[RMDB]
This 207-nucleotide RNA was probed chemically with 2A3. The 2A3 profile rests on 1,042 reads. It was measured as part of the RMDB library OK3TST.
RNA sequence: GGGAACGACUCGAGUAGAGUCGAAAAAUACUUGCAAGCCUCAUGCCACAUAUCUAACGGACUAUCCCAGAUAGGAGGUCUACCGAUUCGAACCUGUCUCCAUAUACCGGCACUUAUGCCAUAAUCUUGAGCAUCCUUUGCGCCUCUAUCGGAGCUACCGUGUCAGAUAGUUCGCUAUCUGACACGGAAAAGAAACAACAACAACAAC
Reactivity to 2A3 in 0.01 (KOAc 150mM, MgCl2 10mM, bicine 150mM(pH8.5), 24C), signal-to-noise 2, nucleotides 027 to 156: a000u060a030c030u020u080g050c070a080a010g020c000c000u020c010a040u090g000c030c030a080c020a040u150a040u150c040u120a120a130c080g020g040a070c020u100a180u100c010c030c020a020g070a120u170a010g100g000a010g000g030u010c020u040a030c040c020g060a040u020u060c020g050a040a010c000c000u040g070u070c020u010c000c020a020u040a000u040a240c040c010g070g000c040a040c070u130u060a070u150g060c010c000a020u110a100a130u070c110u110u100g030a000g000c020a050u100c000c050u010u030u050g020c030g010c000c000u050c010u020a050u090c040g030g010a000g070c000u030a050